About this RNA
This 177-nucleotide RNA was probed chemically with 2A3 and DMS. The reactions ran in a buffer of 150 mM KOAc, 10 mM MgCl2 and 150 mM bicine (pH 8.5), at 24 C.
RNA sequence: GGGAACGACUCGAGUAGAGUCGAAAAGUCUAUCUCGAUGACGAACGUAAAACGCCAGAGGGGUUUGUGCGUGUUUACUGGCCCGAUGAAGCCAUUAAAUUACUGGAAACUGGCGAUGUCGAGUUAAGUUAUGGGCAAAAUUCGUUUUGCCCAUAACAAAAGAAACAACAACAACAAC
Reactivity to 2A3 in 0.01 (KOAc 150mM, MgCl2 10mM, bicine 150mM(pH8.5), 24C), signal-to-noise 2, nucleotides 027 to 126: g010u000c040u040a090u020c000u000c020g000a000u100g050a060c070g050a140a000c040g010u020a020a110a050a070c010g030c000c020a040g050a050g040g110g040g070u000u180u090g080u120g070c070g020u050g080u000u040u030a000c030u010g020g000c000c030c020g060a110u150g030a040a000g000c050c010a010u060u040a000a110a040u140u210a060c050u100g120g010a020a090a100c050u030g030g070c040g000a040u070g010u010c000g000a030g010u050u110a180a020
Reactivity to DMS in 0.01 (KOAc 150mM, MgCl2 10mM, bicine 150mM(pH8.5), 24C), signal-to-noise 4, nucleotides 027 to 126: g010u010c030u010a060u010c000u010c010g010a030u000g020a090c070g040a100a120c170g020u010a090a060a090a170c020g010c000c010a010g010a180g000g000g010g010u010u010u000g010u000g030c180g010u000g010u000u000u000a020c050u000g020g000c020c020c060g020a140u000g010a070a180g010c010c000a020u000u000a010a040a020u010u010a040c070u000g000g010a060a100a100c050u000g010g000c000g000a110u010g010u000c010g020a050g000u000u000a040a170